An RNA of 177 nucleotides, treated with DMS and 2A3 and read out base by base. Reactivities are given for positions 27 through 126. It was measured as part of the RMDB libraries RFM100 and RFMREP.
RNA sequence: GGGAACGACUCGAGUAGAGUCGAAAAAGUCGCCAGGUUUAUAUGAUUCGUUCUUGAGACACCACUUUCUUAUGACUGUGUUUCUAACUUACUUUGUGUGAGGACAUCGGUAGAUGGGCAGUUCGGCAUACUGAAGAAUCUUCGGAUUCUUCAGUAUAAAAGAAACAACAACAACAAC
Reactivity to DMS in 0.01 (KOAc 150mM, MgCl2 10mM, bicine 150mM(pH8.5), 24C), signal-to-noise 9, nucleotides 027 to 126: a090g020u010c050g010c030c020a070g000g000u000u010u010a060u010a070u020g000a070u010u000c040g010u010u000c030u000u000g010a100g010a070c070a060c050c080a070c090u010u000u000c040u010u010a090u020g000a060c060u010g020u010g000u000u000u000c030u000a080a100c060u010u000a040c030u010u020u030g010u020g020u000g000a050g000g010a060c050a030u000c050g010g010u010a060g010a050u000g000g000g000c030a050g000u010u000c060g010g010c170
Reactivity to 2A3 in 0.01 (KOAc 150mM, MgCl2 10mM, bicine 150mM(pH8.5), 24C), signal-to-noise 9, nucleotides 027 to 126: a000g070u050c030g020c040c000a030g040g070u030u120u060a150u050a050u160g080a090u040u080c050g040u030u030c010u040u100g070a050g020a030c030a030c030c010a050c040u070u150u050c040u080u200a130u180g060a060c040u010g010u010g030u050u050u000c040u040a100a090c020u050u090a030c010u080u170u200g100u090g010u020g070a020g010g030a020c000a040u040c040g030g030u040a060g010a100u040g010g020g030c020a030g010u050u060c020g030g000c010